[RMDB]
RNA sequence: GGGAACGACUCGAGUAGAGUCGAAAACUGUAACUGUGGUUUCCAUGACGCUGCUGCUACUGGCUUUCGUCCUCUGGCUCUCUUCGCCAGGGGGCCUAGGUACUCUUGGUGCAGCCCUUUUAACAUUGGCAGCAGGUAAGCCACACGUGUGACAUUGCUCACAAUGUGGGUUCGCCCACAUUGUGAGAAAAGAAACAACAACAACAAC
Reactivity to 2A3 in 0.01 (KOAc 150mM, MgCl2 10mM, bicine 150mM(pH8.5), 24C), signal-to-noise 2, nucleotides 027 to 156: c030u170g060u280a040a010c010u020g000u030g010g010u030u100u060c090c080a200u300g030a040c030g000c170u000g000c000u000g000c020u000a030c050u100g000g080c020u020u130u060c050g000u000c000c000u000c000u000g020g010c000u030c020u040c010u300u300c110g000c000c000a010g030g000g000g000g020c000c000u040a010g000g070u020a110c030u080c030u150u110g000g000u090g130c020a110g030c010c000c000u180u210u020u040a090a110c050a050u060u030g030g000c030a040g010c000a000g000g070u020a020a020g010c000c000a000c010a010c050g030u020g020u010g100a050c030a190u120u300g000